[RMDB]
Source: RMDB library M2PK50, as collected in RNAgym.
This 177-nucleotide RNA was probed chemically with 2A3 and DMS.
RNA sequence: GGGAACGACUCGAGUAGAGUCGAAAAUAUGGGCAGUUCGCUGCCCAUACGAGCGGAGUCCGGCACUAUGAGCCCGCAGCGUUGGUGCGUAGCCGCGCUGCAGAGACCAAGCCUUCGGGCUUGGUAAUAUGAGUGAUCAGUUCGCUGAUCACUCAUAAAAAGAAACAACAACAACAAC
Reactivity to 2A3 in 0.01 (KOAc 150mM, MgCl2 10mM, bicine 150mM(pH8.5), 24C), signal-to-noise 1, nucleotides 027 to 126: u030a000u000g000g010g020c000a000g020u040u060c110g020c100u000g000c020c000c000a000u000a000c020g020a000g060c060g000g010a050g050u000c010c070g060g000c030a010c050u120a050u190g030a030g030c030c030c070g000c020a000g000c000g030u210u300g000g010u060g000c150g130u190a010g030c000c000g010c010g050c000u000g010c000a010g020a000g000a000c000c000a000a000g020c000c000u070u060c180g030g020g000c000u020u000g000g000u000a000a050
Reactivity to DMS in 0.01 (KOAc 150mM, MgCl2 10mM, bicine 150mM(pH8.5), 24C), signal-to-noise 2, nucleotides 027 to 126: u000a000u000g000g000g020c010a010g000u000u010c220g040c020u000g020c000c010c010a000u000a000c080g000a080g010c020g010g000a100g010u000c010c040g000g000c030a070c080u000a080u000g020a120g010c030c010c060g000c020a000g010c000g010u010u010g100g000u010g020c300g000u020a230g020c000c000g010c010g000c020u000g010c020a030g000a120g000a020c000c000a000a000g010c010c000u000u000c250g070g020g000c000u010u000g000g030u000a000a050
DMS adducts were read by reverse transcription with MarathonRT. The reactions ran in a buffer of 150 mM KOAc, 10 mM MgCl2 and 150 mM bicine (pH 8.5), at 24 C. DMS (dimethyl sulfate) methylates the pairing face of unpaired adenines and cytosines. For 2A3 the reverse transcriptase was SuperScript II with manganese.